RNA sequence: GGGAACGACUCGAGUAGAGUCGAAAAUCAGGGCGAUGACUACGGCUACGUGUCCACUGAAGCGAAUGCCUUUUACGAUAAGUACAUUGAAAAGGUACGCGAUGUACAGGAAGACAAGGGAUUCACGCACCCUACCCGGAUUCGUCCGGGUAGGGUGAAAAGAAACAACAACAACAAC
Reactivity to DMS in 0.01 (KOAc 150mM, MgCl2 10mM, bicine 150mM(pH8.5), 24C), signal-to-noise 2, nucleotides 027 to 126: u010c020a160g000g050g010c080g000a040u000g020a080c080u000a020c060g000g000c020u020a080c050g060u000g060u000c000c000a130c100u000g010a160a080g000c060g000a010a070u040g000c000c020u000u000u000u000a260c020g000a060u020a070a120g000u000a010c230a020u000u020g050a040a050a000a160g010g000u010a040c160g080c030g000a020u000g000u000a090c040a110g000g000a260a060g000a080c070a130a010g000g000g000a010u060u000c060a020c130g000
Reactivity to 2A3 in 0.01 (KOAc 150mM, MgCl2 10mM, bicine 150mM(pH8.5), 24C), signal-to-noise 3, nucleotides 027 to 126: u100c060a000g020g060g030c010g050a030u040g010a100c020u060a030c110g040g000c030u070a050c030g070u000g020u000c020c030a000c030u080g030a060a010g020c000g020a140a030u170g020c000c000u070u070u030u070a070c050g000a030u020a150a170g100u060a100c060a060u050u070g070a020a000a020a060g030g030u070a040c020g000c000g060a090u070g030u020a030c000a020g100g040a080a030g020a060c050a010a050g030g020g000a010u030u050c060a020c090g030